[RMDB]
Overview:
An RNA of 177 nucleotides, treated with 2A3 and DMS and read out base by base. Source: RMDB libraries RFM100 and RFMREP, as collected in RNAgym. For 2A3 the reverse transcriptase was SuperScript II with manganese. The RNA was probed in 150 mM KOAc, 10 mM MgCl2 and 150 mM bicine (pH 8.5) at 24 C.
RNA sequence: GGGAACGACUCGAGUAGAGUCGAAAAACGCCUGGAUCAUACGUGAUCCAGGCGAGCCUCCUGUGCCUACUGAGCUGAAACAGUUGAUUCCAGUGCACUGGCUCAGUUCAGCAGGAACAGGAGUCAACUAAGGGGUAUUUUUCGAAAUACCCCUUAGAAAAGAAACAACAACAACAAC
Reactivity to 2A3 in 0.01 (KOAc 150mM, MgCl2 10mM, bicine 150mM(pH8.5), 24C), signal-to-noise 5, nucleotides 027 to 126: a000c010g000c000c000u000g000g010a000u000c020a000u010a080c210g120u050g000a000u010c000c000a000g010g010c000g000a000g030c000c010u010c000c000u000g010u030g020c020c000u010a020c000u000g000a010g010c000u010g000a020a030a020c000a020g040u150u070g110a120u250u180c100c070a090g120u090g220c010a000c000u000g000g000c010u000c000a000g000u010u000c000a010g010c000a000g000g010a000a000c000a000g000g000a000g010u010c010a090a090
Reactivity to DMS in 0.01 (KOAc 150mM, MgCl2 10mM, bicine 150mM(pH8.5), 24C), signal-to-noise 3, nucleotides 027 to 126: a160c030g000c000c000u000g000g020a000u000c000a030u010a080c170g040u010g010a000u000c000c000a010g000g000c010g010a010g000c120c010u000c000c000u000g010u000g000c000c000u010a060c010u000g000a020g000c000u000g000a010a060a070c000a000g000u020u000g020a080u010u020c140c160a110g020u010g000c050a030c010u010g000g020c100u000c000a010g000u000u010c010a020g010c030a000g000g000a040a010c010a000g000g010a010g000u000c090a080a230